This 177-nucleotide RNA was probed chemically with DMS. It was measured as part of the RMDB library OK2TST. For DMS, 725 sequencing reads were counted. The RNA was probed in 150 mM KOAc, 10 mM MgCl2 and 150 mM bicine (pH 8.5) at 24 C.
RNA sequence: GGGAACGACUCGAGUAGAGUCGAAAAGAAAGAAAGAAAGAAUAGAGCCUGCGGUAGUCAACGCUGGAACAACGGGGGACACGCUGAUCUGCACGGGCGCCAAACAGCGACUGCUGGUGUCGUAGAACGUGCGCAGCACGUUCGCGUGCUGCGCACGAAAAGAAACAACAACAACAAC
Reactivity to DMS in 0.01 (KOAc 150mM, MgCl2 10mM, bicine 150mM(pH8.5), 24C), signal-to-noise 1, nucleotides 027 to 126: g000a060a120a080g000a080a040a060g030a110a000a090g010a060a000u000a150g020a150g040c060c020u000g020c060g010g030u000a030g000u000c070a060a020c010g000c140u000g010g010a100a050c080a050a060c100g000g000g000g000g000a100c030a040c060g020c050u000g000a030u000c050u000g010c060a070c140g000g010g010c000g000c040c060a060a060a060c090a120g020c040g010a010c060u000g010c040u000g000g020u020g040u000c030g000u010a050g000a090a130